[RMDB]
RNA sequence: GGGAACGACUCGAGUAGAGUCGAAAAUGCUCGUGGUUUUGCCCGUGAUAUUUCCACCAGAUGUCCAGCAACUCACUCAAAGUUCUGCGAUCUGCUCGCUGACCUGCCCAUUCUUUCUGGCUGGCGUAGGCGAUUGUGUAUCGCUCAAAUGCUACAGUAAGCAUUACAGCUUCGGCUGUAAUGCUUAAAAAGAAACAACAACAACAAC
Reactivity to 2A3 in 0.01 (KOAc 150mM, MgCl2 10mM, bicine 150mM(pH8.5), 24C), signal-to-noise 1, nucleotides 027 to 156: u160g060c040u050c080g050u190g030g050u040u010u050u090g020c000c030c000g060u110g040a060u030a130u110u050u070c060c030a070c010c000a010g040a090u160g010u000c050c000a010g030c070a100a000c010u000c060a040c000u100c030a080a080a110g000u060u080c060u060g030c060g000a010u040c030u030g030c030u000c000g010c060u090g120a200c000c000u070g000c010c010c000a060u190u130c060u100u160u010c080u040g100g000c030u050g000g020c030g070u090a070g000g000c050g030a030u120u050g190u040g020u200a020u010c000g020c010u010c010a210a140a080u200g000c040u040a000c050a040g090